An RNA of 207 nucleotides, treated with DMS and 2A3 and read out base by base. Conditions: 150 mM KOAc, 10 mM MgCl2 and 150 mM bicine (pH 8.5), 24 C. The DMS profile rests on 2,245 reads. For 2A3 the reverse transcriptase was SuperScript II with manganese. Source: RMDB library M2RFOK, as collected in RNAgym.
RNA sequence: GGGAACGACUCGAGUAGAGUCGAAAAUCAGAAUCAGGCCGGAGUGUCUAGCGCUCCGUAAACACGGUCGUACAUCCAGCCGGUAGCCUGGUUCCUUGCAUUGAGUGAUGUACGGAGUUUAUAGAGCAAAAGAAAGACCUGUUCGCAGGUCUUUCAAGCCUUUACACAAGUUCGCUUGUGUAAAGGCAAAAGAAACAACAACAACAAC
Reactivity to DMS in 0.01 (KOAc 150mM, MgCl2 10mM, bicine 150mM(pH8.5), 24C), signal-to-noise 1, nucleotides 027 to 156: u020c070a070g020a040a030u000c010a020g030g010c000c030g040g010a150g030u010g040u000c070u000a200g010c110g030c000u000c000c000g020u000a060a030a050c060a110c070g000g040u000c040g030u020a020c020a020u000c010c040a130g030c000c070g010g000u000a080g010c020c010u040g020g020u010u000c000c050u000u000g000c060a180u020u010g010a170g010u000g010a030u010g000u000a040c020g010g020a230g000u000u000u000a060u000a060g000a050g020c070a060a070a180a200g000a020a050a000g000a020c000c010u000g050u000u010c300g030c010a000g040g010u000c000u000u010u000c000a050a170
Reactivity to 2A3 in 0.01 (KOAc 150mM, MgCl2 10mM, bicine 150mM(pH8.5), 24C), signal-to-noise 2, nucleotides 027 to 156: u100c000a000g010a000a000u010c000a000g020g000c000c000g020g000a010g020u000g040u090c140u150a080g120c040g000c030u000c010c010g010u030a010a020a000c230a020c060g030g020u030c010g010u020a000c000a030u000c020c040a020g050c020c010g000g020u040a010g000c000c000u000g000g000u000u020c000c010u070u110g060c030a140u130u160g090a050g090u120g000a020u020g010u000a040c010g060g000a050g020u040u180u000a210u040a050g180a030g030c060a130a030a020a000g000a000a010a000g000a000c000c000u010g020u040u040c120g030c070a000g020g000u000c000u000u010u000c000a010a000